[RMDB]
RNA sequence: GGGAACGACUCGAGUAGAGUCGAAAAGUCACGAGGAGACUCGUGACAGCAUGCUUCGGCAUGCAAGGGUCGGCAUGGCAUCUCCACCUCCUCGCGGUCCGACCUGGGCAUCCGAAGGAGGACGCACGUCCACUCGGAUGAAUAAGGGAGAGCCAAAGUCAUAUUACUGAUUCGUCAGUAAUAUGACAAAAGAAACAACAACAACAAC
Reactivity to DMS in 0.01 (KOAc 150mM, MgCl2 10mM, bicine 150mM(pH8.5), 24C), signal-to-noise 1, nucleotides 027 to 156: g030u000c000a030c020g000a020g000g030a300g000a210c000u020c010g020u000g040a010c120a090g000c000a000u000g000c010u020u010c300g030g000c010a050u000g020c000a050a000g000g000g030u000c010g030g000c110a300u000g030g000c030a130u000c040u000c010c010a120c090c000u000c010c010u000c060g000c190g010g080u000c000c030g020a060c010c030u000g010g000g010c040a050u000c020c010g000a120a140g060g000a210g050g000a060c020g010c150a220c160g050u000c000c010a040c020u000c060g010g000a030u000g000a010a090u000a150a060g000g010g010a030g020a180g020c030c000a060a170a170
Reactivity to 2A3 in 0.01 (KOAc 150mM, MgCl2 10mM, bicine 150mM(pH8.5), 24C), signal-to-noise 5, nucleotides 027 to 156: g010u000c000a000c000g010a000g020g030a060g020a050c000u000c000g000u000g000a000c010a000g000c000a000u000g000c010u070u040c180g130g000c000a000u000g000c020a030a130g040g000g000u010c010g000g000c040a070u100g010g000c020a260u020c010u000c010c000a010c000c000u040c010c010u080c040g060c080g010g000u000c000c000g000a010c000c000u010g010g030g040c000a000u010c000c010g040a100a040g040g060a190g000g000a020c030g080c110a110c240g010u000c000c000a010c010u000c000g000g000a000u000g010a020a010u110a030a000g010g000g000a000g000a000g000c000c000a040a020a000

Structure probing data (DMS and 2A3) for a 207-nucleotide construct. For 2A3, 9,750 sequencing reads were counted. It was measured as part of the RMDB library OK3TST. For DMS the reverse transcriptase was MarathonRT.